Description: This 177-nucleotide RNA was probed chemically with DMS and 2A3. For DMS the reverse transcriptase was MarathonRT.
RNA sequence: GGGAACGACUCGAGUAGAGUCGAAAAGAUAUGGACGUGCAAGGGAGAGCGUCGGAAACGACCGGCUCGAAGAACUUGACACGUCCUAAGUCAAAGCCACCUACCCCCUUCGGGGGGUAGGUGGCAACUACAUGCUAGUGUUCGCACUAGCAUGUAGAAAAGAAACAACAACAACAAC
Reactivity to DMS in 0.01 (KOAc 150mM, MgCl2 10mM, bicine 150mM(pH8.5), 24C), signal-to-noise 2, nucleotides 027 to 126: g020a040u020a300u000g020g010a000c000g020u000g010c010a030a020g000g000g010a080g010a040g010c000g030u010c000g010g000a070a070a180c020g000a020c090c300g020g020c000u000c000g000a100a100g000a150a130c000u000u000g000a150c000a010c000g010u000c020c000u010a010a080g000u010c030a080a110a130g010c000c010a020c000c010u000a020c000c000c000c000c000u000u020c180g040g000g020g000g000g010u000a000g010g010u000g000g020c000a010a020
Reactivity to 2A3 in 0.01 (KOAc 150mM, MgCl2 10mM, bicine 150mM(pH8.5), 24C), signal-to-noise 2, nucleotides 027 to 126: g040a010u140a040u240g010g010a000c010g000u010g000c000a000a020g000g040g000a040g030a000g030c030g050u030c020g070g030a100a130a040c050g030a050c130c180g270g050c020u030c020g090a130a060g030a030a020c040u070u030g160a230c000a000c020g000u020c000c010u010a010a000g000u010c020a110a050a000g010c000c020a000c000c010u000a010c000c000c030c050c130u000u120c300g040g000g020g000g000g020u000a010g000g010u010g000g000c000a000a000
The reactions ran in a buffer of 150 mM KOAc, 10 mM MgCl2 and 150 mM bicine (pH 8.5), at 24 C.